Record summary:
The data come from the RNA Mapping Database (RMDB), library RFM100. An RNA of 177 nucleotides, treated with 2A3 and DMS and read out base by base. The reactions ran in a buffer of 150 mM KOAc, 10 mM MgCl2 and 150 mM bicine (pH 8.5), at 24 C. Reactivities are rounded to 0.1 and cut off at 0 and 3. For 2A3, 1,179 sequencing reads were counted.

RNA sequence: GGGAACGACUCGAGUAGAGUCGAAAAUGAUUUUUUUAUGCUCAGUAGUGAUAUGCAAAAAAGACAAAGUUGACAUCAGUUAACUUUUACCUUUAUUCUACUUUCCCCAAAGUAAGAAUAAUCUAACAUCCAUUAGGGGUUUCGACCCCUAAUGGAUAAAAGAAACAACAACAACAAC
Reactivity to 2A3 in 0.01 (KOAc 150mM, MgCl2 10mM, bicine 150mM(pH8.5), 24C), signal-to-noise 2, nucleotides 027 to 126: u020g030a060u000u090u020u000u020u010u100a150u100g010c010u020c050a050g010u130a080g060u110g090a080u080a040u300g030c030a010a030a000a000a000a090g070a070c090a010a000a010g010u000u000g000a000c020a080u250c140a110g020u020u040a000a000c000u040u010u090u130a070c000c010u050u040u020a000u000u000c000u000a000c000u040u000u060c000c030c000c020a060a000a000g020u070a090a070g000a030a000u010a000a040u010c030u040a000a050c050
Reactivity to DMS in 0.01 (KOAc 150mM, MgCl2 10mM, bicine 150mM(pH8.5), 24C), signal-to-noise 1, nucleotides 027 to 126: u040g010a050u020u000u000u050u000u000u000a080u030g000c040u010c110a080g010u020a190g010u000g000a120u000a010u000g000c020a000a050a090a030a040a000g000a080c070a010a040a000g000u000u000g000a010c000a180u060c120a080g000u010u000a030a000c000u000u000u000u000a090c140c000u000u010u000a010u000u000c000u010a010c000u000u000u010c070c020c050c040a070a030a030g000u000a020a080g000a010a040u000a020a050u010c070u060a020a230c250